The record gives the reactivity of an RNA of 177 nucleotides to 2A3 and DMS. The data come from the RNA Mapping Database (RMDB), library OK2TRN. The reactions ran in a buffer of 150 mM KOAc, 10 mM MgCl2 and 150 mM bicine (pH 8.5), at 24 C. DMS adducts were read by reverse transcription with MarathonRT.
RNA sequence: GGGAACGACUCGAGUAGAGUCGAAAACGUUUUGGACUUUAUUGACAGGCUGCGCUGUGCCGAGCGGGCAAUUGCCGUCGCACGCCGGGGCAGCAACGUUGCCGAGCAGCUCGAUGUGACGCCGCUGCCCACAGAUGAGUUUCGACUCAUCUGUGGGAAAAGAAACAACAACAACAAC
Reactivity to 2A3 in 0.01 (KOAc 150mM, MgCl2 10mM, bicine 150mM(pH8.5), 24C), signal-to-noise 2, nucleotides 027 to 126: c090g000u040u020u030u300g110g020a060c050u110u150u140a110u130u250g030a020c020a080g120g000c020u030g000c100g030c080u040g000u080g100c050c010g020a070g030c010g000g050g010c040a100a300u200u200g040c060c050g030u050c060g030c020a040c030g020c010c010g000g000g020g000c010a000g000c010a010a000c020g070u040u020g000c020c000g020a040g020c010a010g000c010u020c010g040a130u160g020u050g080a030c060g020c090c000g000c030u050g000
Reactivity to DMS in 0.01 (KOAc 150mM, MgCl2 10mM, bicine 150mM(pH8.5), 24C), signal-to-noise 2, nucleotides 027 to 126: c230g030u010u000u020u000g020g010a110c060u000u010u000a140u020u000g020a120c160a130g000g010c020u000g000c070g020c020u000g000u010g040c010c010g020a100g040c010g000g000g000c030a140a090u020u000g010c180c090g010u020c110g000c020a080c090g000c040c070g020g000g000g030c010a020g000c060a070a030c070g010u000u000g000c060c000g000a070g010c100a180g010c020u010c020g010a090u030g010u000g000a080c040g000c020c040g000c020u000g000